[RMDB]
RNA sequence: GGGAACGACUCGAGUAGAGUCGAAAAGAUAUGGACCUGAGGAGGGAGAACCAGUCGGAAACGACUGAGUUCAUCGAUCUCCCAGGUCCUAAGUCAAAAGGGUAGGCUUGUUCGCAAGCCUACCCAACAUCUAAUUCCUGUUCGCAGGAAUUAGAUGAAAAGAAACAACAACAACAAC
Reactivity to DMS in 0.01 (KOAc 150mM, MgCl2 10mM, bicine 150mM(pH8.5), 24C), signal-to-noise 6, nucleotides 027 to 126: g000a020u000a080u010g000g000a010c000c000u010g000a180g020g010a010g030g020g010a180g010a010a000c000c000a010g000u000c000g020g010a030a020a050c010g010a020c010u000g000a090g010u000u000c010a180u020c300g010a130u000c010u000c000c000c010a010g010g010u000c000c000u000a000a040g000u000c010a080a110a120a130g000g000g010u000a010g000g010c000u000u000g000u000u010c250g020c010a000a000g010c010c000u000a000c000c000c010a010a030
Reactivity to 2A3 in 0.01 (KOAc 150mM, MgCl2 10mM, bicine 150mM(pH8.5), 24C), signal-to-noise 4, nucleotides 027 to 126: g000a000u020a010u050g000g010a000c000c000u060g020a300g110g010a010g050g160g050a190g010a040a000c000c000a000g010u000c010g000g020a010a010a000c000g010a000c010u010g030a060g080u000u000c010a030u220c070g220a300u030c000u000c000c000c000a000g000g000u000c000c000u000a000a000g000u000c000a010a010a040a080g000g010g000u000a000g010g010c010u010u040g040u160u190c300g030c220a020a000g000c000c000u000a010c000c000c000a000a000

This 177-nucleotide RNA was probed chemically with DMS and 2A3. For 2A3, 17,536 sequencing reads were counted. DMS adducts were read by reverse transcription with MarathonRT. For DMS, 11,681 sequencing reads were counted.